[RMDB]
RNA sequence: GGGAACGACUCGAGUAGAGUCGAAAAGUGGGACCUGCAGCCUGACACUGACUACGAGAUCCACUUGUUUAAGGAGAGGAUGUUCCGGCACCAAAUGGCUGUGAAGACCAAUGGCACAGGUGAGGCGUGGUUAGCCCUAAUUCGUUAGGGCUAACCAAAAAGAAACAACAACAACAAC
Reactivity to DMS in 0.01 (KOAc 150mM, MgCl2 10mM, bicine 150mM(pH8.5), 24C), signal-to-noise 2, nucleotides 027 to 126: g040u000g000g000g030a100c080c030u010g010c000a060g020c100c050u030g000a120c100a110c120u010g020a100c060u000a100c160g090a060g000a080u000c020c060a060c040u000u000g000u030u000u000a170a070g000g000a040g040a090g000g000a030u000g000u000u000c000c060g000g030c010a110c080c040a060a120a080u010g030g000c020u000g000u000g010a140a080g010a080c070c040a070a100u000g000g000c060a030c070a080g000g020u000g000a100g000g010c080g010

The record gives the reactivity of an RNA of 177 nucleotides to DMS. The DMS profile rests on 1,030 reads. Source: RMDB library OK2TST, as collected in RNAgym. Values cover nucleotides 27 to 126.